[RMDB]
RNA sequence: GGGAACGACUCGAGUAGAGUCGAAAACAGUUAUGUGCGUCCCUCCCGAAGCUGCGCGCUCGGUCGAAGAGGACGACCAUCGCCGAUUGAGGACGACCGGUCUUCGGUCAAGGGAAUAAGAGUAAAACGAUCAUCCACAAUUCGUUGUGGAUGAUCGAAAAGAAACAACAACAACAAC
Reactivity to 2A3 in 0.01 (KOAc 150mM, MgCl2 10mM, bicine 150mM(pH8.5), 24C), signal-to-noise 2, nucleotides 027 to 126: c020a000g070u150u120a080u160g170u110g000c000g020u000c000c010c010u000c000c010c000g050a160a010g000c010u020g050c080g020c020g000c120u010c040g020g020u070c070g030a090a020g040a080g080g010a010c020g000a080c010c000a060u070c030g030c030c000g040a070u010u100g030a010g040g010a020c020g070a120c020c090g120g030u020c090u080u040c020g000g020u000c040a030a070g090g000g040a040a060u160a210a050g100a040g090u160a010a020a030a060
Reactivity to DMS in 0.01 (KOAc 150mM, MgCl2 10mM, bicine 150mM(pH8.5), 24C), signal-to-noise 3, nucleotides 027 to 126: c100a100g010u000u000a040u010g030u000g010c050g010u000c010c000c020u000c050c010c000g000a030a060g040c020u000g040c120g040c090g050c030u000c010g000g020u000c140g010a110a080g020a120g010g010a090c050g000a030c020c050a090u000c070g000c090c070g000a100u000u010g000a070g000g000a060c070g000a190c110c050g010g010u000c010u010u010c000g020g000u000c080a110a090g000g010g010a100a060u010a050a090g010a080g020u020a070a060a140a120

Chemical mapping of a 177-nucleotide RNA with 2A3 and DMS. Reactivities are given for positions 27 through 126. Source: RMDB library M2PK90, as collected in RNAgym. For 2A3 the reverse transcriptase was SuperScript II with manganese. Conditions: 150 mM KOAc, 10 mM MgCl2 and 150 mM bicine (pH 8.5), 24 C. DMS adducts were read by reverse transcription with MarathonRT.